RNA sequence: GGGAACGACUCGAGUAGAGUCGAAAACAUUGAACUUCAAACCUGUGUCUCUGCAACAAUUCAGUUCGUGAAUGGUUGAUCUCAGUUUUAACGAGUUAACUGCAAGUUGUCCUGCAGACUCUGAAAGAAUCAUUAACACGUUCGCGUGUUAAUGAUUAAAAGAAACAACAACAACAAC
Reactivity to 2A3 in 0.01 (KOAc 150mM, MgCl2 10mM, bicine 150mM(pH8.5), 24C), signal-to-noise 4, nucleotides 027 to 126: c030a030u060u160g050a100a060c050u100u050c100a090a100a100c020c020u040g010u040g040u090c030u040c020u120g010c020a060a020c010a060a010u070u050c010a020g140u140u180c080g090u100g020a040a030u060g010g040u030u050g060a100u050c040u030c060a080g020u010u010u050u210a090a020c020g000a000g000u040u070a060a030c000u000g000c010a070a070g000u060u040g060u100c010c010u010g000c000a010g010a120c010u000c000u030g060a120a080a020g110
Reactivity to DMS in 0.01 (KOAc 150mM, MgCl2 10mM, bicine 150mM(pH8.5), 24C), signal-to-noise 7, nucleotides 027 to 126: c100a080u010u010g010a070a090c090u000u000c080a060a090a110c090c030u000g010u000g010u000c040u010c040u000g010c040a040a040c060a050a040u000u010c040a050g010u010u000c130g010u000g000a040a050u000g000g020u000u000g010a080u010c060u000c040a090g010u000u000u010u000a060a130c150g000a050g020u010u010a050a080c030u000g000c050a050a080g010u000u010g000u000c080c060u010g020c010a020g000a070c030u000c010u000g000a060a110a100g000
Structure probing data (2A3 and DMS) for a 177-nucleotide construct.
The reactions ran in a buffer of 150 mM KOAc, 10 mM MgCl2 and 150 mM bicine (pH 8.5), at 24 C.
Reactivities are given for positions 27 through 126.
For DMS the reverse transcriptase was MarathonRT.